[RMDB]
RNA sequence: GGGAACGACUCGAGUAGAGUCGAAAAUAAAGUAUGCCACAAUUUUGAGGGAUAAGAGAAAAAUGAACGGAGAUCAUAUUUCUUCCCACAUUCCAGUAGGCAUUUUGCACUCCCUACUGUGUACACAAUCCACUUUGUAAGCCUCUGGCUUUUGAGAAUUUACUGAUAGGUUCGCCUAUCAGUAAAUAAAAGAAACAACAACAACAAC
Reactivity to DMS in 0.01 (KOAc 150mM, MgCl2 10mM, bicine 150mM(pH8.5), 24C), signal-to-noise 2, nucleotides 027 to 156: u000a030a080a100g020u000a080u010g030c020c020a110c060a100a130u000u000u000u010g010a160g020g020g010a140u010a110a120g010a130g000a020a050a070a100a040u000g000a030a080c110g010g010a140g020a120u010c060a050u000a120u000u000u000c030u010u000c010c000c010a080c090a110u000u000c020c040a100g000u010a040g020g020c040a140u000u000u000u000g000c060a080c060u000c080c010c010u000a050c060u000g000u000g010u000a100c050a080c080a070a100u000c020c040a060c050u000u000u000g020u000a070a110g000c020c010u000c080u010g030g020c070u000u000u000u010g010a150g000a120
Reactivity to 2A3 in 0.01 (KOAc 150mM, MgCl2 10mM, bicine 150mM(pH8.5), 24C), signal-to-noise 4, nucleotides 027 to 156: u150a020a050a020g090u050a040u080g030c020c010a070c050a140a100u090u130u110u150g060a100g010g020g010a040u110a270a060g030a010g040a030a040a050a050a050u050g020a090a000c110g140g060a050g020a100u060c010a000u020a080u040u050u010c010u030u040c000c030c000a030c020a010u120u020c020c010a030g010u050a050g060g040c040a030u070u060u030u170g020c010a030c040u040c020c020c000u020a070c010u030g030u020g020u100a040c090a000c010a110a070u060c060c000a040c040u110u120u100g100u120a040a010g010c000c000u160c180u250g030g030c000u080u020u070u110g070a070g030a070